[RMDB]
RNA sequence: GGGAACGACUCGAGUAGAGUCGAAAAUGUCACACAGUAGCGAGGGAUGCAAUUAAUUGCAUCAACACCAAGCUCAAGGCUUGGAUUUCGACUAGUGUCGAGUCGUUCCCACUCGCUACGCCCACAACAAUCAUUAAAUAUUCGUAUUUAAUGAUUGAAAAGAAACAACAACAACAAC
Reactivity to DMS in 0.01 (KOAc 150mM, MgCl2 10mM, bicine 150mM(pH8.5), 24C), signal-to-noise 9, nucleotides 027 to 126: u010g010u010c180a120c210a140c160a080g040u000a010g000c010g010a030g000g000g010a010u000g000c000a010a040u010u010a100a090u010u000g000c000a000u000c000a060a090c180a190c010c000a000a010g000c000u000c160a120a100g010g000c010u000u000g000g000a240u000u000u000c000g000a010c000u000a040g010u010g010u000c000g010a010g000u000c000g000u000u000c000c000c000a000c000u000c010g010c000u000a010c010g010c050c020c030a080c140a070a130
Reactivity to 2A3 in 0.01 (KOAc 150mM, MgCl2 10mM, bicine 150mM(pH8.5), 24C), signal-to-noise 2, nucleotides 027 to 126: u070g020u060c010a040c010a010c020a220g000u010a000g010c000g000a010g010g020g000a000u000g000c020a000a020u140u200a140a230u160u020g000c000a000u000c000a020a010c010a020c000c000a010a010g000c010u050c080a050a090g160g010c010u010u010g010g020a080u040u040u010c000g000a000c010u050a050g160u030g090u300c000g000a000g010u010c000g000u000u000c000c000c000a000c000u000c000g000c000u000a010c030g010c010c010c000a070c030a090a040

Description:
This 177-nucleotide RNA was probed chemically with DMS and 2A3. Reactivities are rounded to 0.1 and cut off at 0 and 3. The data come from the RNA Mapping Database (RMDB), library M2PK90. The 2A3 profile rests on 4,505 reads. The RNA was probed in 150 mM KOAc, 10 mM MgCl2 and 150 mM bicine (pH 8.5) at 24 C. DMS adducts were read by reverse transcription with MarathonRT.